The record gives the reactivity of an RNA of 207 nucleotides to 2A3 and DMS. Reactivities are given for positions 27 through 156. For 2A3, 1,729 sequencing reads were counted. Source: RMDB library OK3TST, as collected in RNAgym. Conditions: 150 mM KOAc, 10 mM MgCl2 and 150 mM bicine (pH 8.5), 24 C.

RNA sequence: GGGAACGACUCGAGUAGAGUCGAAAACGGCAGGGGCCGAAGAGGAAUUCGAGGACUGCGGCAUCCGUGAAGUAACCAACCUUCUUGAAUCCAACCAGGUGAAGGAGAUCCGCUAAUGAACACCGUCAAACUUAUGGUUGUCAAUGCGGCCCGCGAACGUGCUCAUUACGUUCGCGUAAUGAGCACGAAAAGAAACAACAACAACAAC
Reactivity to 2A3 in 0.01 (KOAc 150mM, MgCl2 10mM, bicine 150mM(pH8.5), 24C), signal-to-noise 3, nucleotides 027 to 156: c030g040g000c030a030g060g020g010g040c040c060g030a040a030g040a020g080g060a080a100u120u100c100g020a030g020g050a030c040u080g030c020g050g000c040a030u000c000c010g030u020g030a050a000g030u060a020a030c000c000a000a080c010c010u030u050c000u000u070g080a070a050u050c040c000a030a030c060c050a070g020g000u040g050a040a030g050g020a050g000a060u030c000c020g000c030u060a120a110u120g030a050a020c030a010c040c020g130u100c060a090a120a150c050u130u120a050u150g030g000u060u120g070u070c050a050a060u120g050c000g020g010c000c000c000g040c040g010a040a010
Reactivity to DMS in 0.01 (KOAc 150mM, MgCl2 10mM, bicine 150mM(pH8.5), 24C), signal-to-noise 2, nucleotides 027 to 156: c060g000g020c030a130g020g010g010g030c030c030g070a060a020g010a160g000g000a110a090u000u010c060g000a130g000g000a110c090u000g030c070g020g030c060a130u020c020c030g000u020g010a060a050g020u100a190a120c130c070a060a120c060c010u000u000c020u000u000g010a160a100u000c040c000a050a090c070c040a050g000g050u010g000a080a070g020g010a140g000a140u000c000c060g010c080u000a070a110u010g010a030a070c020a180c030c050g010u030c100a040a040a090c040u000u000a130u000g020g020u000u010g010u000c050a110a130u000g010c040g020g000c020c030c020g010c050g000a060a230